[RMDB]
RNA sequence: GGGAACGACUCGAGUAGAGUCGAAAAGGUCGGUGUUUCGACACCGACCACUUACCGAGAAUGUUCCUCGGUAUAUAAAACAAAGCCUUGGAAACAAGGGAAUACGAAUCGUGUUCGCACGAUUCAACUUUGAGUACAAGUUCGCUUGUACUCAAAGAAAAGAAACAACAACAACAAC
Reactivity to 2A3 in 0.01 (KOAc 150mM, MgCl2 10mM, bicine 150mM(pH8.5), 24C), signal-to-noise 5, nucleotides 027 to 126: g000g000u000c000g010g000u010g010u000u060u140c170g030a010c000a000c010c000g000a000c000c000a000c000u010u020a000c000c010g000a000g000a060a230u240g030u110u090c010c000u000c010g000g040u000a020u000a000u030a130a070a010a010c100a050a090a040g170c000c000u020u010g000g020a050a030a000c000a000a010g040g010g060a060a060u180a080c110g010a000a010u000c000g000u010g040u060u080c260g000c060a010c000g000a010u010u010c000a000a030
Reactivity to DMS in 0.01 (KOAc 150mM, MgCl2 10mM, bicine 150mM(pH8.5), 24C), signal-to-noise 5, nucleotides 027 to 126: g010g020u000c010g030g020u000g000u000u000u000c190g030a060c010a000c000c000g020a000c000c000a010c070u010u000a000c010c000g000a020g000a160a110u020g020u010u000c070c000u000c010g010g000u000a010u000a050u010a040a050a070a100c210a080a120a130g000c020c000u000u000g000g010a150a140a220c010a010a010g000g010g010a080a060u010a100c180g000a000a010u000c000g010u000g000u000u010c200g020c000a000c000g000a020u000u000c000a040a070